Structure probing data (DMS and 2A3) for a 207-nucleotide construct. For 2A3, 9,365 sequencing reads were counted. 2A3 adducts were read by reverse transcription with SuperScript II with manganese. It was measured as part of the RMDB library RNAMAK. For DMS the reverse transcriptase was MarathonRT.

RNA sequence: GGGAACGACUCGAGUAGAGUCGAAAAGGGGUCGCUCUGUAGGACGCCCACAGGCUUGGAUUUAUGGGACUGAAGCCUCCACGGUCCCAUUGUCAGCCUGUGAGCGCGUCCGCAGAUAGAGCGACGGAGGCACCCAAAAGACGAGUUCGCUCGUCAACAUACGUUAGUCUUUCGAGACUAACGUAUGAAAAGAAACAACAACAACAAC
Reactivity to DMS in 0.01 (KOAc 150mM, MgCl2 10mM, bicine 150mM(pH8.5), 24C), signal-to-noise 2, nucleotides 027 to 156: g000g000g010g010u010c010g030c010u030c010u000g030u000a090g040g020a050c010g000c000c030c010a020c000a000g000g000c030u010u000g030g000a090u000u000u000a010u010g010g010g020a040c010u020g010a030a120g000c010c000u000c000c020a300c030g010g000u000c000c000c010a040u010u000g010u010c050a090g010c010c000u010g020u010g020a040g020c070g020c010g000u000c000c010g000c040a050g010a190u000a080g010a040g030c000g000a030c010g000g030a040g010g000c000a090c010c000c010a060a120a090a120g000a020c000g020a050g000u010u000c300g040c010u000c010g000u000c010a050a210
Reactivity to 2A3 in 0.01 (KOAc 150mM, MgCl2 10mM, bicine 150mM(pH8.5), 24C), signal-to-noise 6, nucleotides 027 to 156: g030g010g000g000u010c000g010c010u040c020u050g040u100a300g010g000a000c010g000c010c010c000a000c000a000g010g050c040u240u300g140g000a090u240u300u160a000u090g000g000g000a000c000u010g010a080a010g010c010c000u000c000c000a040c010g000g000u000c000c000c000a000u000u000g000u020c070a030g020c000c000u000g000u000g020a050g000c120g000c000g010u000c000c000g000c010a000g000a010u120a040g200a010g000c000g000a000c000g000g000a000g000g000c010a040c020c000c000a050a120a020a040g000a000c010g010a000g030u110u180c220g110c060u000c000g000u000c010a000a000